[RMDB]
RNA sequence: GGGAACGACUCGAGUAGAGUCGAAAACGACAAACCGUAAGUUCUACUGCCCUUUAUUGUUGGGUGCACCCUGGGACCCAGUAAUACCCGGGGGGAGGCGGGGUAAACCCAUACUAUGGGAACUGCUCAAGCCACGGGUUCGCCCGUGGCAAAAGAAACAACAACAACAAC
Reactivity to 2A3 in 0.01 (KOAc 150mM, MgCl2 10mM, bicine 150mM(pH8.5), 24C), signal-to-noise 3, nucleotides 027 to 129: c050g050a010c050a030a040a050c020c000g060u120a020a020g020u070u000c030u020a100c030u040g010c000c010c000u030u050u090a190u180u110g060u110u070g000g000g000u050g020c050a110c000c000c020u030g010g000g030a000c010c000c000a030g030u120a000a080u070a150c000c000c000g010g030g000g000g010g010a060g010g000c030g010g000g000g000u000a020a030a060c000c040c000a010u070a150c210u220a070u100g000g020g000a030a040c000u060g010c020u100c010a000a080
Reactivity to DMS in 0.01 (KOAc 150mM, MgCl2 10mM, bicine 150mM(pH8.5), 24C), signal-to-noise 3, nucleotides 027 to 129: c000g060a070c120a000a000a000c070c070g000u000a050a110g000u140u000c060u060a180c060u050g010c010c000c000u040u020u060a050u150u110g030u050u000g000g080g010u000g030c170a130c040c000c000u080g050g090g000a070c090c070c040a110g050u060a000a110u040a190c090c010c030g000g000g000g000g000g000a050g020g010c070g010g050g000g000u000a070a170a090c050c010c020a070u000a140c140u050a100u000g000g050g080a060a050c110u000g000c050u000c120a020a170